About this RNA:
This 207-nucleotide RNA was probed chemically with 2A3. Reactivities are given for positions 27 through 156. Source: RMDB library ARCHII, as collected in RNAgym. For 2A3, 1,933 sequencing reads were counted. The RNA was probed in 150 mM KOAc, 10 mM MgCl2 and 150 mM bicine (pH 8.5) at 24 C.
RNA sequence: GGGAACGACUCGAGUAGAGUCGAAAAAGGCAUUGUCGCGCAUGAACUGCAACUGCUGAGGGAUCAGGAUAAUCAUCCGCAGAUAAAUAUAACUGCUAAAAAUAAUACACAAACUUACGCAAUGGCAGCCUAAACAGCACCAUGCGUGCCUGAUUUUCGAUGUAACAUUGUUCGCAAUGUUACAUCGAAAAGAAACAACAACAACAAC
Reactivity to 2A3 in 0.01 (KOAc 150mM, MgCl2 10mM, bicine 150mM(pH8.5), 24C), signal-to-noise 4, nucleotides 027 to 156: a000g060g020c060a050u080u110g050u140c030g010c000g010c060a040u070g070a090a050c060u060g010c020a060a070c030u070g020c020u010g010a040g000g030g000a020u020c030a010g110g010a230u050a050a050u100c010a020u010c000c030g030c000a000g000a050u100a150a300a020u210a040u070a130a030c000u000g010c010u080a000a040a070a060a040u170a050a070u140a080c060a000c020a060a140a020c050u210u160a020c020g010c050a020a120u000g010g000c000a010g010c000c010u060a060a040a020c050a000g000c010a000c020c000a010u000g000c010g000u010g030c000c020u040g060a090u020u010u000u010